An RNA of 177 nucleotides, treated with DMS and 2A3 and read out base by base. DMS (dimethyl sulfate) methylates the pairing face of unpaired adenines and cytosines. For DMS the reverse transcriptase was MarathonRT.

RNA sequence: GGGAACGACUCGAGUAGAGUCGAAAACGCACCGCUCACUGCCCAAGCCGCGCUAGCACUGCAAACCGAGUUCGCGGCACCGGUCGUGUGUGCCUUCGGCAUGACCGAAGCCACCCACCAGGUAACGAGACUAACUAUACUUCGGUAUAGUUAGUCUAAAAGAAACAACAACAACAAC
Reactivity to DMS in 0.01 (KOAc 150mM, MgCl2 10mM, bicine 150mM(pH8.5), 24C), signal-to-noise 5, nucleotides 027 to 126: c110g020c060a050c060c090g020c040u000c040a090c090u000g000c000c020c030a140a180g010c020c010g010c050g020c140u010a050g010c050a080c080u010g030c120a070a090a150c100c060g000a070g010u000u000c030g040c040g000g020c050a080c140c080g010g020u000c270g030u010g030u010g020u010g000c160c020u000u000c020g000g010c020a080u000g010a150c000c020g000a050a060g010c180c010a090c000c020c080a050c020c060a160g010g010u000a060a100c190g000
Reactivity to 2A3 in 0.01 (KOAc 150mM, MgCl2 10mM, bicine 150mM(pH8.5), 24C), signal-to-noise 3, nucleotides 027 to 126: c030g010c010a050c020c030g030c020u030c030a080c030u100g020c000c010c000a040a020g020c020c010g030c000g010c060u060a050g020c040a040c140u120g030c050a090a050a060c060c010g030a030g080u090u090c030g020c020g040g000c030a010c000c010g000g050u090c150g010u030g000u060g020u120g030c040c000u020u050c020g050g000c070a190u270g110a230c000c000g000a000a000g000c010c000a020c010c010c000a010c000c010a050g000g060u040a060a020c100g060